[RMDB]
RNA sequence: GGGAACGACUCGAGUAGAGUCGAAAAGACGACACCUUGGGUUGGUUAAUGCUACACCAACAAGGUAGACAUACAUCCUGUGGAGUAGAACAUGAGCGAUAAAAUUAUUCACCUGACUGACGAAAUGCAAUCUUAAUAGCUUCGGCUAUUAAGAUUGAAAAGAAACAACAACAACAAC
Reactivity to DMS in 0.01 (KOAc 150mM, MgCl2 10mM, bicine 150mM(pH8.5), 24C), signal-to-noise 6, nucleotides 027 to 126: g000a120c090g010a210c150a050c020c010u000u000g010g000g020u000u010g000g010u000u000a090a080u010g010c170u000a080c140a060c010c010a030a120c050a030a010g000g010u000a030g020a130c160a090u000a090c130a070u000c020c020u000g020u000g000g010a070g020u010a070g000a060a060c050a040u010g000a070g020c060g000a080u010a050a050a050a090u000u010a100u010u000c030a070c010c030u010g000a080c070u000g010a050c100g010a070a110a050u010g000
Reactivity to 2A3 in 0.01 (KOAc 150mM, MgCl2 10mM, bicine 150mM(pH8.5), 24C), signal-to-noise 6, nucleotides 027 to 126: g060a010c060g010a000c010a020c040c000u060u020g290g020g040u080u040g050g030u020u150a120a030u190g080c070u070a020c020a010c050c000a040a040c020a010a010g010g000u020a030g020a010c030a040u150a020c020a050u050c010c020u030g010u040g020g020a060g010u080a030g050a080a020c030a080u080g020a020g050c040g040a020u150a080a120a030a040u170u110a070u070u070c020a050c050c020u060g070a100c020u050g030a030c030g050a050a040a050u100g000